[RMDB]
RNA sequence: GGGAACGACUCGAGUAGAGUCGAAAAAAUUAGAGGCAAUUUGAAAUAAUUCAAAUUAGCUCAACCCUACUGCACUUACCGAACUAGAUAACGGUGUAGUAGGGGUAAAUUCUCCGCAUUCGGUGCGCAACCACCUGAGGUUUCGACCUCAGGUGAAGCCUAUACGUGAGUUCGCUCACGUAUAGGCAAAAGAAACAACAACAACAAC
Reactivity to 2A3 in 0.01 (KOAc 150mM, MgCl2 10mM, bicine 150mM(pH8.5), 24C), signal-to-noise 1, nucleotides 027 to 156: a000a000u130u100a020g020a030g040g010c010a010a010u000u000u010g040a020a010a090u190a110a250u210u000c000a020a000a000u000u010a030g000c000u000c000a000a010c000c000c000u000a000c000u000g020c000a000c000u000u080a060c050c010g040a080a010c050u020a060g080a240u090a300a120c090g010g000u000g000u000a000g000u000a000g000g000g000g000u000a000a000a000u000u000c030u020c020c020g000c010a020u000u060c070g070g020u010g000c040g010c030a080a000c040c000a020c010c000u030g000a020g020g010u020u110u120c200g080a140c000c010u000c000a000g000g000u010g010a010a000